[RMDB]
RNA sequence: GGGAACGACUCGAGUAGAGUCGAAAAGCGCAAGAUAUUUGAUGGAGCGUGGCGUUGAAAAGAAGGACUUCAACACGUACGGUGCAAGGAGAGGAAACUUCGAGGUGAUGGUCAGAGGAACGUUUGCGGCUCAUUUGACAUUCGUGUCAAAUGAGCCAAAAGAAACAACAACAACAAC
Reactivity to DMS in 0.01 (KOAc 150mM, MgCl2 10mM, bicine 150mM(pH8.5), 24C), signal-to-noise 1, nucleotides 027 to 126: g000c040g040c120a120a100g010a100u000a070u000u020u000g010a050u000g000g020a150g020c030g020u000g000g020c100g000u000u000g000a020a060a050a130g000a130a080g000g010a060c070u000u000c020a010a070c030a050c070g010u010a080c130g000g000u010g000c060a050a050g030g010a040g000a070g000g000a080a050a040c030u000u000c020g010a060g000g000u000g000a100u020g010g010u000c080a050g000a110g020g020a040a050c180g000u000u000u020g000c250

Chemical mapping of a 177-nucleotide RNA with DMS. Source: RMDB library OK2TST, as collected in RNAgym.